[RMDB]
RNA sequence: GGGAACGACUCGAGUAGAGUCGAAAAGAUAUGGAUAGUACCGAGGAUCAAACUCACAGAUGGUCGGAAACGACCAUUCACAGGUUUGGGAGGUAGUCCUAAGUCAAAAGUUGGGUUCGCCCAACAACUUCUCUUUGUAGUUCGCUACAAAGAGAAGAAAAGAAACAACAACAACAAC
Reactivity to DMS in 0.01 (KOAc 150mM, MgCl2 10mM, bicine 150mM(pH8.5), 24C), signal-to-noise 5, nucleotides 027 to 126: g000a050u000a300u010g010g010a010u000a120g000u000a020c010c010g010a110g010g010a060u000c010a010a010a000c010u000c050a170c300a300g000a000u000g000g000u000c000g000g010a080a080a170c000g010a010c000c000a000u000u000c020a100c300a140g000g000u000u000u000g000g000g000a040g010g020u000a040g000u000c000c000u010a070a180g010u010c060a050a050a090a080g000u000u000g000g000g000u010u010c280g010c010c000c000a000a030c010a070a090